[RMDB]
This 207-nucleotide RNA was probed chemically with 2A3. Reactivities are rounded to 0.1 and cut off at 0 and 3. For 2A3, 999 sequencing reads were counted.

RNA sequence: GGGAACGACUCGAGUAGAGUCGAAAAGGCGCUGGCGCAGGGUGUAUUGCGUGGUGAGGAGUUUAAUUCGGUCAAUGAAAGUGGUGACCGGAUCGUACGUGCACUGGCUGCGGGUAUGGGCGUGGCCCGUAAAGAUCUGAAGGCAAUGGCGGAUGAAGUCAUCAUAGGGAUUCGUCCCUAUGAUGACAAAAGAAACAACAACAACAAC
Reactivity to 2A3 in 0.01 (KOAc 150mM, MgCl2 10mM, bicine 150mM(pH8.5), 24C), signal-to-noise 2, nucleotides 027 to 156: g040g040c050g000c070u060g050g000c000g060c080a030g070g060g000u020g010u070a080u080u140g030c040g000u020g010g040u090g030a080g020g000a030g030u050u140u130a020a000u030u050c020g010g010u020c030a020a050u120g180a220a170a040g130u130g150g030u000g010a000c000c000g000g000a010u010c030g040u070a100c050g050u050g040c040a010c040u020g080g000c020u020g000c000g000g000g000u030a060u060g080g020g000c010g030u040g070g030c040c000c000g020u070a070a060a050g010a020u080c020u040g030a090a000g000g000c040a050a050u040g020g010c000g030g010a020u050g030a080a000